[RMDB]
RNA sequence: GGGAACGACUCGAGUAGAGUCGAAAAGUUUAUACAGGCACCCCACAAGUCCUUUUCCCAACACAGACAGGAAUACGGCAGCCUGUGCCCUGGGAGCUCACUGUCUUGUGGGAGGGAACCACUCAAGGUAUGUGAAAGAAUUCGUUCUUUCACAUACAAAAGAAACAACAACAACAAC
Reactivity to DMS in 0.01 (KOAc 150mM, MgCl2 10mM, bicine 150mM(pH8.5), 24C), signal-to-noise 6, nucleotides 027 to 126: g010u010u010u010a120u010a100c040a060g000g040c040a300c110c000c010c030a090c210a070a090g010u020c020c040u000u000u010u000c000c000c000a050a100c060a030c150a020g010a020c030a020g010g000a130a130u010a080c230g010g000c020a100g020c010c010u000g010u000g000c030c040c090u010g010g000g010a090g000c080u000c100a120c040u000g010u000c020u000u000g040u000g010g000g000a100g000g000g000a060a090c180c110a080c100u000c110a090a110g010
Reactivity to 2A3 in 0.01 (KOAc 150mM, MgCl2 10mM, bicine 150mM(pH8.5), 24C), signal-to-noise 5, nucleotides 027 to 126: g020u110u190u150a200u040a100c020a000g010g020c020a040c010c030c040c000a030c030a030a030g080u040c020c020u080u110u160u030c020c010c000a090a020c030a010c010a010g040a010c010a010g050g090a160a120u200a170c070g020g010c020a020g010c000c010u010g020u020g020c010c010c020u120g040g020g070a050g010c030u060c060a060c020u020g000u020c000u030u050g000u010g010g000g000a050g010g000g010a000a030c040c040a100c060u100c080a070a020g160

This 177-nucleotide RNA was probed chemically with DMS and 2A3. Conditions: 150 mM KOAc, 10 mM MgCl2 and 150 mM bicine (pH 8.5), 24 C. For 2A3 the reverse transcriptase was SuperScript II with manganese. DMS (dimethyl sulfate) methylates the pairing face of unpaired adenines and cytosines. For DMS the reverse transcriptase was MarathonRT.